[RMDB]
RNA sequence: GGGAACGACUCGAGUAGAGUCGAAAACUUAAAUCCUUCCAAUCCCUGGGAAAGGAUUUCAGCCGGAGAUUGCGUGAUGGAAGAGUGAUCUGAAAUGUUAGAAACAUGCAGGUAGGUUGCAGAGUCACAGAAGGGUAACGUUCGCGUUACCCUUCUGAAAAGAAACAACAACAACAAC
Reactivity to DMS in 0.01 (KOAc 150mM, MgCl2 10mM, bicine 150mM(pH8.5), 24C), signal-to-noise 2, nucleotides 027 to 126: c080u010u000a020a030a020u000c000c000u030u000c020c010a120a100u010c020c030c020u000g010g000g010a020a040a030g000g000a000u000u000u000c100a080g000c020c030g020g020a120g010a090u010u000g020c030g020u000g000a060u010g030g030a160a060g000a070g020u020g010a050u000c020u000g010a050a050a030u000g010u000u000a100g020a110a120a120c040a010u000g030c030a020g010g010u000a050g010g000u010u010g000c050a070g000a100g000u010c100a110

This 177-nucleotide RNA was probed chemically with DMS. Reactivities are given for positions 27 through 126. The DMS profile rests on 1,535 reads. It was measured as part of the RMDB library OK2TRN.